[RMDB]
RNA sequence: GGGAACGACUCGAGUAGAGUCGAAAAUCGGUCAACACCAUCGGGGAAUGCUGACUCGGAGAGCCGUGCCCACGGCGCGGCGCUCUCGCCGUCACUCAUGUCCUACCGGCCUCCGAGAGUCUAGGUGUAGGCCCAACUGAUUCGUCAGUUGGGCCUAAAAAGAAACAACAACAACAAC
Reactivity to DMS in 0.01 (KOAc 150mM, MgCl2 10mM, bicine 150mM(pH8.5), 24C), signal-to-noise 1, nucleotides 027 to 126: u020c020g060g010u000c030a030a100c040a030c010c000a200u010c090g000g050g010g020a040a010u000g000c300u010g020a070c000u000c030g000g010a030g020a070g020c000c000g020u000g010c000c010c160a150c210g020g020c060g010c010g020g000c090g000c180u010c090u010c110g020c040c150g000u010c050a020c130u020c170a050u000g000u010c000c020u000a150c100c010g000g010c040c020u010c040c000g000a090g000a080g000u000c100u000a140g010g000u000g000